An RNA of 207 nucleotides, treated with 2A3 and read out base by base. For 2A3 the reverse transcriptase was SuperScript II with manganese.
[RMDB]
RNA sequence: GGGAACGACUCGAGUAGAGUCGAAAAUGGGACCUAGACAAGUCGCUCUCUCUCUCACUAUACAUCCUCUCAGGCAUAGAGAUGACCAAUUGCGUAGGGUGUGUCCUUAAGUACACCAUUCCUAUCUAUAGUGAUGUAGGGGGGUCGGGUUUGAUCCGACUCACAGGACGUUCGCGUCCUGUGAGUCAAAAGAAACAACAACAACAAC
Reactivity to 2A3 in 0.01 (KOAc 150mM, MgCl2 10mM, bicine 150mM(pH8.5), 24C), signal-to-noise 2, nucleotides 027 to 156: u140g030g030g020a010c000c000u010a080g010a060c020a020a050g150u080c010g030c010u020c000u020c000u010c000u010c010u010c070a020c020u040a030u020a050c060a060u010c020c030u030c030u000c110a050g180g020c070a140u160a130g020a020g010a040u040g090a070c000c140a120a230u180u170g010c090g010u010a030g000g000g010u000g010u010g000u020c020c000u190u210a160a050g000u020a010c030a030c020c050a040u200u130c020c000u020a040u100c000u050a010u000a040g040u020g010a040u060g140u200a040g000g000g000g000g010g000u000c030g000g000g050u030u010u050g100a150u010c030c010